[RMDB]
RNA sequence: GGGAACGACUCGAGUAGAGUCGAAAAGUUGUGGCGGCUGCUAUUGAACAACAUCACGAUGAACGCGGUAUUAUUUGGCCAACAGAUGCAAUUGCCCCUUUCACCGUAGCGGUUGUUCCGAUGAAUAACGUCUAAAUUGAUUCGUCAAUUUAGACGUAAAAGAAACAACAACAACAAC
Reactivity to DMS in 0.01 (KOAc 150mM, MgCl2 10mM, bicine 150mM(pH8.5), 24C), signal-to-noise 9, nucleotides 027 to 126: g010u000u000g020u000g020g010c070g020g010c040u000g010c050u010a080u010u000g010a040a040c040a030a050c070a080u010c060a070c050g010a060u000g010a040a060c080g020c300g010g010u000a040u000u010a080u000u000u000g010g000c080c130a070a100c140a060g000a070u000g010c110a040a070u010u000g010c010c000c030c050u000u000u000c020a030c020c010g010u000a070g030c110g010g000u000u000g010u000u000c010c090g000a060u000g010a070a090u010a110
Reactivity to 2A3 in 0.01 (KOAc 150mM, MgCl2 10mM, bicine 150mM(pH8.5), 24C), signal-to-noise 5, nucleotides 027 to 126: g060u060u060g040u050g050g040c020g010g030c040u030g000c010u090a080u080u170g050a060a020c010a020a020c000a060u090c050a010c030g040a040u060g040a040a010c020g000c030g040g020u040a030u140u050a080u040u180u100g090g000c030c010a060a030c020a100g100a070u130g020c000a030a090u070u070g020c010c000c000c000u010u060u030c040a030c020c010g030u020a030g040c030g040g000u010u010g000u030u060c030c010g020a040u100g020a070a080u130a090
Chemical mapping of a 177-nucleotide RNA with DMS and 2A3. Reactivities are rounded to 0.1 and cut off at 0 and 3. DMS adducts were read by reverse transcription with MarathonRT. The RNA was probed in 150 mM KOAc, 10 mM MgCl2 and 150 mM bicine (pH 8.5) at 24 C.